[RMDB]
RNA sequence: GGGAACGACUCGAGUAGAGUCGAAAAUUCAAGUCCCGGAGUCUAUGAAAGAUAUAUAUGGGUCAAGCCUGAGUUCGUACCAAGAACCGACACAGGUGCCCCUAGAUGAAUAGUCUAAGGCGUUUGGGUACACUUAGUUGUUCGCAACUAAGUGUACAAAAGAAACAACAACAACAAC
Reactivity to DMS in 0.01 (KOAc 150mM, MgCl2 10mM, bicine 150mM(pH8.5), 24C), signal-to-noise 2, nucleotides 027 to 126: u000u010c170a130a140g010u010c000c020c010g020g000a170g020u000c010u000a100u020g000a140a110a060g010a150u010a060u000a070u010a080u000g020g010g010u010c100a110a100g020c000c020u000g010a130g000u000u000c110g000u000a190c090c190a060a130g020a140a100c060c070g000a050c050a120c020a020g000g030u000g000c170c110c000c060u000a040g010a060u010g000a070a090u020a060g010u000c010u030a110a090g020g000c040g010u000u000u030g030g020
Chemical mapping of a 177-nucleotide RNA with DMS. The DMS profile rests on 975 reads. Source: RMDB library RFMREP, as collected in RNAgym.